The record gives the reactivity of an RNA of 177 nucleotides to 2A3 and DMS. The data come from the RNA Mapping Database (RMDB), library OK1LIB. For 2A3, 2,605 sequencing reads were counted.

RNA sequence: GGGAACGACUCGAGUAGAGUCGAAAAUAAAACCUAUGCACGCCAGCAACUUCUCCCAAUGUCGGUCAUCCUCGCCUUGAAUAAUCAAUUCUAUCUUUCCAGCACGUAUCAAGUAUAUACUGGGUACAAUACGCUGAGUGUUCGCACUCAGCGUAUUAAAAGAAACAACAACAACAAC
Reactivity to 2A3 in 0.01 (KOAc 150mM, MgCl2 10mM, bicine 150mM(pH8.5), 24C), signal-to-noise 4, nucleotides 027 to 126: u210a020a110a050a020c050c010u070a080u140g050c050a010c080g030c010c020a020g000c030a080a130c020u030u000c020u010c020c000c000a000a060u110g060u080c030g020g000u020c010a040u060c010c000u010c010g040c040c000u040u080g040a040a020u230a050a030u110c040a020a080u130u070c050u070a130u040c030u020u050u030c000c020a040g030c050a010c110g010u020a020u050c080a020a090g060u000a050u020a000u010a200c040u020g040g000g000u050a020c020
Reactivity to DMS in 0.01 (KOAc 150mM, MgCl2 10mM, bicine 150mM(pH8.5), 24C), signal-to-noise 2, nucleotides 027 to 126: u030a050a130a040a120c010c000u020a060u040g000c050a070c010g000c000c020a090g010c070a030a050c090u000u010c010u010c000c010c040a110a130u000g010u030c000g000g000u000c060a040u000c010c020u000c020g000c070c000u000u000g000a030a050u000a070a060u030c120a050a050u020u010c030u000a050u020c040u000u000u000c050c020a040g000c110a100c090g000u010a030u000c060a010a010g000u010a140u040a110u020a070c030u000g000g000g010u000a000c090

Conditions: 150 mM KOAc, 10 mM MgCl2 and 150 mM bicine (pH 8.5), 24 C.
For DMS the reverse transcriptase was MarathonRT.